[RMDB]
The record gives the reactivity of an RNA of 177 nucleotides to 2A3 and DMS. It was measured as part of the RMDB library OK2TRN. For DMS the reverse transcriptase was MarathonRT. The 2A3 profile rests on 6,413 reads. The RNA was probed in 150 mM KOAc, 10 mM MgCl2 and 150 mM bicine (pH 8.5) at 24 C. Values cover nucleotides 27 to 126.
RNA sequence: GGGAACGACUCGAGUAGAGUCGAAAAUAUUGGCCUGCCUGGUGACCCUCCUUGCUCCUGGUCCCACUGCCAAACCUCUGGAGUCUGCCACAUCCCUGCAUAGACAGGGCCACUGACAGGCAGUGGCCCCUCUAGGCUAUUUCGAUAGCCUAGAGGGAAAAGAAACAACAACAACAAC
Reactivity to 2A3 in 0.01 (KOAc 150mM, MgCl2 10mM, bicine 150mM(pH8.5), 24C), signal-to-noise 2, nucleotides 027 to 126: u100a030u020u110g040g020c010c010u020g010c030c010u080g050g060u110g100a120c010c010c010u020c000c020u030u060g050c020u020c020c010u010g030g030u050c000c000c010a040c030u040g000c010c010a090a060a100c020c010u060c040u060g050g010a060g050u030c030u050g080c030c010a070c010a080u120c010c000c010u010g000c090a230u100a130g100a120c030a030g000g000g000c000c020a030c020u060g100a090c020a090g000g080c010a010g000u030g000g030c000
Reactivity to DMS in 0.01 (KOAc 150mM, MgCl2 10mM, bicine 150mM(pH8.5), 24C), signal-to-noise 7, nucleotides 027 to 126: u010a110u010u010g010g000c040c030u000g010c040c020u010g010g000u010g010a120c070c020c020u010c050c030u000u000g020c040u000c030c030u010g020g010u000c060c010c020a090c070u000g000c040c030a050a100a130c080c040u010c070u000g010g010a110g010u000c040u010g010c020c030a060c110a100u000c010c000c010u000g010c060a130u010a110g000a180c090a040g010g000g010c040c040a020c050u010g000a120c200a080g010g020c010a060g020u000g010g000c240